[RMDB]
RNA sequence: GGGAACGACUCGAGUAGAGUCGAAAAGUGCAGCUUGCCUCCGAGCGGGCGAGCCACCUCGAGCGGGUGACGAAAUAGUGGAAAAGAAACGGGGAAGCAAAACUGUGCUGUUCUGGCCCGCAGCGGAACGGUGCUAGUGGUUCGCCACUAGCACCGUAAAAGAAACAACAACAACAAC
Reactivity to 2A3 in 0.01 (KOAc 150mM, MgCl2 10mM, bicine 150mM(pH8.5), 24C), signal-to-noise 2, nucleotides 027 to 126: g040u060g020c020a020g000c070u040u060g170c030c000u050c000c040g040a000g030c080g040g000g000c000g000a010g000c000c020a050c020c000u020c020g040a060g000c050g000g000g000u020g030a060c000g000a060a090a010u170a040g090u100g170g000a040a080a060a030g080a130a080a000c070g000g030g000g150a070a030g030c070a120a150a000a020c020u020g010u040g050c030u000g040u060u020c070u100g000g000c000c000c010g020c030a010g000c000g050g070a010
Reactivity to DMS in 0.01 (KOAc 150mM, MgCl2 10mM, bicine 150mM(pH8.5), 24C), signal-to-noise 1, nucleotides 027 to 126: g060u000g050c090a140g080c000u010u000g020c020c020u060c040c150g000a160g060c130g070g010g070c010g020a070g000c010c030a040c010c070u000c050g040a100g000c070g000g000g050u010g000a020c050g000a010a040a090u060a100g020u010g000g000a080a020a160a110g010a060a200a110c020g020g000g000g000a080a090g020c120a020a080a060a050c060u000g000u000g020c000u000g000u010u010c030u060g050g000c030c000c000g000c100a130g000c170g000g030a080
Structure probing data (2A3 and DMS) for a 177-nucleotide construct. DMS adducts were read by reverse transcription with MarathonRT. Reactivities are given for positions 27 through 126. Source: RMDB library OK1LIB, as collected in RNAgym. The RNA was probed in 150 mM KOAc, 10 mM MgCl2 and 150 mM bicine (pH 8.5) at 24 C.